The record gives the reactivity of an RNA of 177 nucleotides to 2A3 and DMS. For 2A3 the reverse transcriptase was SuperScript II with manganese. The DMS profile rests on 3,869 reads. The RNA was probed in 150 mM KOAc, 10 mM MgCl2 and 150 mM bicine (pH 8.5) at 24 C.

RNA sequence: GGGAACGACUCGAGUAGAGUCGAAAAGAUAUGGAUCAUAUCUUCGCUCUUGGAUUUAUGGUGAAACUAUAUCGGAAACGAUAUAGGAGUAUGCCAUUGUCAGAGCGAAGUAAGUGAUCCUAAGUCAGCUACACAUAUAGUUCGCUAUAUGUGUAGCAAAAGAAACAACAACAACAAC
Reactivity to 2A3 in 0.01 (KOAc 150mM, MgCl2 10mM, bicine 150mM(pH8.5), 24C), signal-to-noise 5, nucleotides 027 to 126: g050a060u090a040u240g000g010a000u000c010a010u040a110u070c000u000u010c000g000c000u030c010u110u300g300g020a160u300u300u110a010u100g000g020u020g010a010a010a010c000u010a010u000a000u020c000g040g020a100a060a040c010g000a000u000a010u000a020g000g000a000g010u000a020u300g000c000c010a010u010u000g000u020c010a000g000a000g010c010g000a000a000g000u010a120a010g010u000g010a000u000c000c010u000a150a010g100u020c050a030
Reactivity to DMS in 0.01 (KOAc 150mM, MgCl2 10mM, bicine 150mM(pH8.5), 24C), signal-to-noise 4, nucleotides 027 to 126: g010a090u000a300u000g010g010a020u000c010a020u000a300u010c000u000u000c010g010c000u000c000u000u000g050g000a020u000u020u000a000u000g000g020u000g000a230a150a160c000u000a000u000a000u000c000g000g000a140a100a300c000g010a020u000a000u000a010g000g010a080g010u000a080u020g000c010c010a000u010u000g010u000c000a020g000a010g010c000g000a000a000g000u010a020a200g020u010g000a020u000c000c000u000a020a130g010u000c070a180